[RMDB]
RNA sequence: GGGAACGACUCGAGUAGAGUCGAAAACAGACCAAGUUCGCUUGGUCUGAAAGAAAGCGGAAAGCACCAGGGAGGGAAGGUGCCGGCCGCAACCACCCAUAAAAAGUACGAUCUUCGGAUCGUACAAGUUCAGAUUACCGUUCGCGGUAAUCUGAACAAAAGAAACAACAACAACAAC
Reactivity to DMS in 0.01 (KOAc 150mM, MgCl2 10mM, bicine 150mM(pH8.5), 24C), signal-to-noise 1, nucleotides 027 to 126: c000a000g000a040c000c050a020a010g010u000u000c270g020c020u010u000g010g040u000c000u000g000a000a030a100g000a060a060a090g000c010g010g000a080a080a090g030c020a010c010c000a160g000g040g000a050g020g020g020a240a180g010g000u000g040c010c300g000g000c000c010g000c010a090a070c120c060a120c000c010c000a150u000a040a040a090a080a190g000u000a000c000g000a030u000c000u000u020c150g000g000a000u000c000g000u000a000c010a000a000
Reactivity to 2A3 in 0.01 (KOAc 150mM, MgCl2 10mM, bicine 150mM(pH8.5), 24C), signal-to-noise 3, nucleotides 027 to 126: c010a000g000a020c000c000a000a000g000u030u070c120g000c170u000u000g010g000u000c000u000g000a000a000a000g050a020a070a010g000c000g000g010a050a040a010g010c000a000c010c010a030g060g080g060a120g000g030g040a070a060g000g010u000g000c000c000g100g070c010c000g010c010a000a000c010c020a030c000c000c020a030u240a040a120a020a010a000g000u000a000c000g000a000u000c000u030u070c240g090g010a000u000c000g000u000a000c000a000a010
An RNA of 177 nucleotides, treated with DMS and 2A3 and read out base by base. Conditions: 150 mM KOAc, 10 mM MgCl2 and 150 mM bicine (pH 8.5), 24 C. For 2A3, 5,462 sequencing reads were counted. Reactivities are given for positions 27 through 126.